[RMDB]
Chemical mapping of a 177-nucleotide RNA with DMS and 2A3. For DMS the reverse transcriptase was MarathonRT.
RNA sequence: GGGAACGACUCGAGUAGAGUCGAAAAUGCCAUCGCGCUAUGACUCUGACUUACCCAUGAGCAGCGCUACGCUCAAUCAGGUGCUCACACUGACCUAUCGUCUGGCGCAGAAGGAAGGGCAGUCACAUGCCAUUACGCUGUUCGCAGCGUAAUGGCAAAAAGAAACAACAACAACAAC
Reactivity to DMS in 0.01 (KOAc 150mM, MgCl2 10mM, bicine 150mM(pH8.5), 24C), signal-to-noise 2, nucleotides 027 to 126: u000g000c010c000a110u000c100g030c010g020c030u030a050u000g020a060c060u000c080u000g010a060c100u000u010a170c000c000c040a150u020g000a050g010c020a160g020c050g000c130u010a040c060g000c040u000c120a090a100u000c050a010g000g000u000g010c050u000c020a110c190a030c080u010g000a090c070c050u000a090u000c010g000u000c030u000g000g010c060g000c030a110g010a040a050g000g000a080a180g000g060g020c070a030g000u000c120a060c180a120
Reactivity to 2A3 in 0.01 (KOAc 150mM, MgCl2 10mM, bicine 150mM(pH8.5), 24C), signal-to-noise 1, nucleotides 027 to 126: u180g030c040c000a130u110c010g000c020g050c000u020a030u230g020a050c000u000c040u100g060a010c000u070u130a090c000c020c000a090u060g040a000g000c020a000g030c080g000c060u040a000c070g020c000u000c010a000a110u050c030a070g030g030u040g000c030u040c010a090c000a030c000u050g100a110c010c010u060a140u150c050g070u000c050u080g160g000c070g000c040a010g040a060a040g070g020a030a060g040g000g000c010a010g010u050c020a050c030a080
Annotation: The reactions ran in a buffer of 150 mM KOAc, 10 mM MgCl2 and 150 mM bicine (pH 8.5), at 24 C. The data come from the RNA Mapping Database (RMDB), library OK2TRN. For DMS, 1,047 sequencing reads were counted.